RNA sequence: GGGAACGACUCGAGUAGAGUCGAAAAGGUCUGCAGAACACUCUUUGAGAAACACUGAUGUAGGAGAUUGUUCAGGGCAAAGCAGAAGGUUCACCUGACUCUCAGGGAACCAGAAUAACCUAGUAACCAUGGGAUCAUUGUUACAGGAUCCACAUCAAGGAUACCGGAUAUUCGUAUCCGGUAUCCUAAAAGAAACAACAACAACAAC
Reactivity to 2A3 in 0.01 (KOAc 150mM, MgCl2 10mM, bicine 150mM(pH8.5), 24C), signal-to-noise 3, nucleotides 027 to 156: g020g050u030c000u020g000c030a020g020a090a010c020a010c020u000c010u070u120u140g120a110g110a080a160a030c120a050c160u130g070a110u150g050u070a050g040g060a040g000a030u000u140g010u040u020c060a030g000g120g000c060a140a030a000g000c010a050g040a100a090g020g000u000u000c060a210c290c000u030g020a100c020u040c010u010c170a000g000g020g000a000a000c000c000a000g040a010a090u060a020a000c000c000u040a130g000u000a000a010c010c020a010u010g040g000g130a120u300c010a000u020u060g010u040u040a010c000a030g080g000a030u000c040c010a060c040a070u120c050a070
Reactivity to DMS in 0.01 (KOAc 150mM, MgCl2 10mM, bicine 150mM(pH8.5), 24C), signal-to-noise 1, nucleotides 027 to 156: g090g070u000c070u000g050c030a280g040a140a120c040a010c090u010c000u000u000u000g020a270g070a270a050a040c080a150c040u000g030a070u010g020u000a200g030g010a120g000a130u000u000g030u000u010c110a140g000g060g070c050a130a110a270g050c000a070g000a070a110g000g030u000u000c020a100c020c000u000g000a120c230u010c090u000c020a040g010g000g000a060a000c000c000a030g010a050a070u010a060a120c050c000u000a130g050u000a110a060c050c070a070u000g010g000g000a120u010c070a110u000u000g040u010u000a060c060a000g020g010a160u010c020c030a010c030a040u000c040a030